[RMDB]
RNA sequence: GGGAACGACUCGAGUAGAGUCGAAAACCAGAGGGAUCAACUCUUUGAAAAAUAGAAUCUGGGGACUUAAAUCCGGGGCUGGGAAGCACCGGAUGGCCCUUAUAGGAGAGGCGGGGAUAACGUCGACGUAGAUAAGAAUGUUCGCAUUCUUAUCUACAAAAGAAACAACAACAACAAC
Reactivity to DMS in 0.01 (KOAc 150mM, MgCl2 10mM, bicine 150mM(pH8.5), 24C), signal-to-noise 3, nucleotides 027 to 126: c010c010a040g010a080g010g000g010a110u010c060a110a130c060u000c030u000u020u000g000a050a060a100a090a110u010a110g010a080a090u000c070u000g000g010g000g010a040c080u000u010a040a090a080u000c000c000g000g000g000g040c000u000g010g010g010a220a020g030c010a010c000c010g000g010a010u000g000g010c030c000c020u010u000a030u000a080g000g010a070g000a080g000g010c090g020g000g020g000a080u010a030a050c130g000u010c090g010a130c210
Reactivity to 2A3 in 0.01 (KOAc 150mM, MgCl2 10mM, bicine 150mM(pH8.5), 24C), signal-to-noise 2, nucleotides 027 to 126: c010c000a020g030a010g050g040g010a070u110c050a040a200c050u030c030u030u070u140g160a140a170a020a060a060u140a100g080a100a070u050c080u080g010g000g000g080a080c050u170u190a100a200a120u000c000c010g000g000g010g000c000u000g060g040g090a090a010g000c000a020c010c000g010g000a000u000g000g010c000c000c010u020u010a230u140a030g060g050a100g000a050g000g080c070g000g000g020g010a010u030a170a050c030g060u030c070g050a050c080